[RMDB]
RNA sequence: GGGAACGACUCGAGUAGAGUCGAAAAGAUAUGGAUUCGAUGGAGGAACUACCUGCAGUGUCGGAAACGACACAAAUCAGGCCGAUGAAAUCGAAUCCUAAGUCAAGGCCUAGGUUCGCCUAGGCAAGCCACGGUUAAAGUUCGCUUUAACCGUGGCAAAAGAAACAACAACAACAAC
Reactivity to 2A3 in 0.01 (KOAc 150mM, MgCl2 10mM, bicine 150mM(pH8.5), 24C), signal-to-noise 2, nucleotides 027 to 126: g050a000u040a000u090g000g010a000u000u000c000g000a000u010g000g010a030g120g000a160a180c120u100a110c150c020u030g000c030a050g000u000g000u010c000g010g010a000a060a030c010g000a010c020a000c040a020a150a010u130c010a020g000g080c020c120g300a300u070g010a010a000a000u000c000g000a000a000u030c000c000u010a040a000g030u010c030a070a090g200g000c000c000u000a000g000g000u080u040c290g120c050c000u000a000g000g060c000a000a000
Reactivity to DMS in 0.01 (KOAc 150mM, MgCl2 10mM, bicine 150mM(pH8.5), 24C), signal-to-noise 1, nucleotides 027 to 126: g020a020u000a300u000g000g010a010u000u000c020g000a000u000g000g000a130g020g000a040a030c120u010a280c000c000u000g000c200a140g040u000g030u000c000g020g010a050a020a120c020g010a010c050a000c000a000a040a060u000c010a000g000g040c050c060g010a080u020g000a100a120a010u000c000g020a000a000u000c000c010u000a020a040g020u010c020a100a080g000g000c000c000u000a000g000g000u000u020c270g030c000c000u000a000g010g020c000a040a020